Structure probing data (DMS and 2A3) for a 207-nucleotide construct. The reactions ran in a buffer of 150 mM KOAc, 10 mM MgCl2 and 150 mM bicine (pH 8.5), at 24 C.
[RMDB]
RNA sequence: GGGAACGACUCGAGUAGAGUCGAAAAUAGCAGGACAUAGCCGUUAUGCGCGAAGCGGUGUAGCGUCACAUUGAUGGCGGUACUAUGAAUUGAUGCAAGGUGUGGAGCGACCUUAAACAGUUCUGGUUUGACGGCUUUCAGUUCGCUGAAAGCCGAACAGAUAUAGAUCUUUCGAGAUCUAUAUCUGAAAAGAAACAACAACAACAAC
Reactivity to DMS in 0.01 (KOAc 150mM, MgCl2 10mM, bicine 150mM(pH8.5), 24C), signal-to-noise 2, nucleotides 027 to 156: u010a070g020c040a060g030g000a120c030a090u010a180g020c010c040g000u000u000a060u000g020c010g000c040g020a090a120g000c010g010g000u000g020u010a100g020c050g060u000c020a040c040a170u010u010g040a100u010g030g000c000g020g020u010a080c050u000a070u010g010a070a120u010u010g010a110u000g010c050a140a080g010g020u010g000u000g020g000a100g000c030g000a100c020c030u000u030a060a090a150c000a100g020u000u000c010u000g010g020u000u000u000g010a140c010g020g000c010u000u000u010c000a020g020u000u010c290g020c000u030g030a010a010a010g000c010c000g000a010a050
Reactivity to 2A3 in 0.01 (KOAc 150mM, MgCl2 10mM, bicine 150mM(pH8.5), 24C), signal-to-noise 9, nucleotides 027 to 156: u100a010g020c030a020g020g040a040c020a040u060a020g010c000c010g040u080u050a070u180g070c060g010c030g050a060a010g040c040g040g020u070g020u060a040g060c010g030u040c020a030c060a110u110u300g090a160u050g120g000c010g010g050u030a030c020u040a040u120g060a070a060u110u070g050a050u070g050c030a030a010g010g010u020g030u080g020g000a000g000c010g010a010c000c000u070u130a110a040a010c010a020g000u010u000c010u040g060g050u040u080u110g090a040c000g000g000c000u000u000u000c000a010g010u010u090c140g010c100u000g000a000a000a000g000c000c000g000a000a000